Annotation
The record gives the reactivity of an RNA of 177 nucleotides to 2A3 and DMS. The reactions ran in a buffer of 150 mM KOAc, 10 mM MgCl2 and 150 mM bicine (pH 8.5), at 24 C. For 2A3, 782 sequencing reads were counted. It was measured as part of the RMDB library RFMREP.
RNA sequence: GGGAACGACUCGAGUAGAGUCGAAAAGUCUCUUCCACUUUCAUGAGUAAACCAUGUAAGGAAAGAUCUUGAAUCCUAGCUUCAAUUGCCAAGUCACGUUGUUCUACCUUCGCUGGCGCUUGAUGGAGCAGUGACUAUAGUUCGCUAUAGUCACUGCAAAAGAAACAACAACAACAAC
Reactivity to 2A3 in 0.01 (KOAc 150mM, MgCl2 10mM, bicine 150mM(pH8.5), 24C), signal-to-noise 1, nucleotides 027 to 126: g050u010c010u020c000u180u050c080c060a160c050u000u070u100c010a020u030g060a040g200u200a070a010a220c040c000a040u000g010u000a000a050g000g020a060a000a000g040a020u090c000u070u030g040a020a060u000c000c020u040a070g000c010u050u000c020a020a240u070u020g000c020c030a060a030g010u040c040a000c130g060u080u020g080u300u000c030u120a100c000c000u000u040c010g050c030u010g030g000c010g020c030u060u050g030a020u050g060g010a070
Reactivity to DMS in 0.01 (KOAc 150mM, MgCl2 10mM, bicine 150mM(pH8.5), 24C), signal-to-noise 2, nucleotides 027 to 126: g000u010c140u000c060u000u010c020c010a150c050u010u000u000c010a020u000g000a160g030u020a110a110a220c190c000a030u000g000u000a020a020g020g000a030a020a010g010a050u000c030u000u000g010a140a100u000c000c010u000a070g020c060u000u000c010a060a060u000u010g020c020c070a070a090g010u010c110a100c050g000u000u000g030u010u040c110u000a060c100c020u000u010c130g030c050u010g000g010c030g010c130u000u000g000a060u000g000g000a180